[RMDB]
The data come from the RNA Mapping Database (RMDB), library OK3TST. Chemical mapping of a 207-nucleotide RNA with DMS and 2A3. As a SHAPE reagent, 2A3 marks flexible, mostly unpaired nucleotides at the ribose 2'-OH. Reactivities are given for positions 27 through 156. For DMS the reverse transcriptase was MarathonRT. For DMS, 2,211 sequencing reads were counted.

RNA sequence: GGGAACGACUCGAGUAGAGUCGAAAACAGCCGGGAGCUUUGGCAAGACUCACGUCUCUAACAACCGAGCUCCCCAAGUGAGCAACUCCUGUCCCUUUUAUGGGCUCAGGACUCUAAGGGGGUCCGUGUGAGAGGACCGUGAUGGAUUGAUCAAGCAAUCACUAAAUCGAUUCGUCGAUUUAGUGAUAAAAGAAACAACAACAACAAC
Reactivity to DMS in 0.01 (KOAc 150mM, MgCl2 10mM, bicine 150mM(pH8.5), 24C), signal-to-noise 1, nucleotides 027 to 156: c020a190g020c040c100g000g050g040a080g010c010u000u000u020g040g020c000a080a090g030a140c020u000c050a080c080g000u010c030u000c050u000a160a190c100a150a060c030c020g000a010g020c010u000c010c000c000c020a000a090g050u030g030a080g000c020a060a080c040u000c010c010u010g000u010c000c000c000u000u000u000u000a100u020g000g000g000c050u000c010a030g000g000a070c010u000c000u000a180a120g030g010g000g000g040u000c000c030g020u000g030u000g030a150g000a250g000g000a030c040c010g010u000g020a090u010g010g000a130u000u010g010a090u000c040a050a170g030c030a200
Reactivity to 2A3 in 0.01 (KOAc 150mM, MgCl2 10mM, bicine 150mM(pH8.5), 24C), signal-to-noise 3, nucleotides 027 to 156: c020a020g080c020c040g070g060g000a090g000c020u150u150u180g090g020c010a020a000g010a010c000u030c020a020c030g110u030c040u010c020u060a110a060c080a050a070c130c000g030a030g010c010u080c000c010c000c000a050a060g130u090g050a010g020c010a080a190c070u030c010c000u010g040u040c000c010c000u060u250u040u140a150u250g010g000g000c010u030c010a000g000g000a040c000u000c000u070a080a080g000g000g000g000g010u010c020c000g040u080g000u010g050a040g000a010g030g010a070c080c020g000u010g010a040u120g020g020a010u020u080g040a110u090c000a000a010g030c000a010